RNA sequence: GGGAACGACUCGAGUAGAGUCGAAAAGAUAUGGACCAACUACCCACCUUUACACAGCGAAGAACUAAUAGUAAACUCGGAAACGAGUUUACUAUUAGGGAGCUGGUAAAGAGGUUGGUCCUAAGUCCGUUAAACCCAUCUUCGGAUGGGUUUAACGAAAAGAAACAACAACAACAAC
Reactivity to DMS in 0.01 (KOAc 150mM, MgCl2 10mM, bicine 150mM(pH8.5), 24C), signal-to-noise 1, nucleotides 027 to 126: g020a300u030a140u010g020g050a000c010c000a000a050c000u000a160c050c040c110a300c160c070u000u000u000a000c000a180c020a010g000c000g030a200a300g000a130a180c000u000a010a000u000a000g000u000a000a020a010c000u000c000g010g000a130a110a250c000g050a000g020u020u020u000a000c000u000a000u000u000a000g040g010g010a090g030c000u000g000g030u000a000a000a000g000a030g010g000u000u000g000g000u000c020c010u000a030a080g000u000c140